The data come from the RNA Mapping Database (RMDB), library OK3TST. The record gives the reactivity of an RNA of 207 nucleotides to 2A3 and DMS.
[RMDB]
RNA sequence: GGGAACGACUCGAGUAGAGUCGAAAAUUGGUUUUGGUUUUAAUAUCAACCGACGUUUUGCCUUUGGGUCUGUCACAGGAGGAACAGGAGUAGCAGGAGGAAUAGAUGCCACACUGACUACCGAUUCGGCAUCAGACACAUCGUCUUCGUCACCACCUCAAAAAGUGGCAUUCGUGCCACUUUUUGAAAAAGAAACAACAACAACAAC
Reactivity to 2A3 in 0.01 (KOAc 150mM, MgCl2 10mM, bicine 150mM(pH8.5), 24C), signal-to-noise 1, nucleotides 027 to 156: u060u040g010g020u090u030u000u080g010g030u040u030u040u180a100a120u090a010u040c020a010a020c000c050g050a010c020g040u090u070u130u040g020c010c000u020u070u040g040g000g000u070c010u000g010u060c060a020c000a100g000g150a020g010g020a060a030c020a030g000g010a010g020u040a010g000c030a020g010g020a010g020g030a010a010u040a110g010a000u040g030c000c010a070c000a030c070u030g120a090c030u150a170c050c050g090a110u070u110c090g030g030c060a010u010c020a000g020a020c030a010c000a110u100c010g040u000c000u130u030c010g000u000c000a000c050c000a020c040c000
Reactivity to DMS in 0.01 (KOAc 150mM, MgCl2 10mM, bicine 150mM(pH8.5), 24C), signal-to-noise 1, nucleotides 027 to 156: u000u000g000g030u010u010u000u010g080g000u010u000u020u000a060a150u010a080u010c050a040a090c010c010g010a090c040g000u000u010u010u010g010c090c050u010u000u030g010g010g000u000c050u010g000u030c120a070c020a210g030g010a150g060g040a060a010c020a040g000g010a110g020u000a050g010c030a010g010g020a020g010g000a150a050u000a050g020a050u010g030c030c030a110c200a110c030u000g030a110c020u010a080c010c040g040a300u010u000c080g010g000c080a130u000c010a070g010a050c050a080c080a060u000c050g000u000c090u000u000c020g000u000c020a100c010c030a070c110c060

For DMS, 1,528 sequencing reads were counted.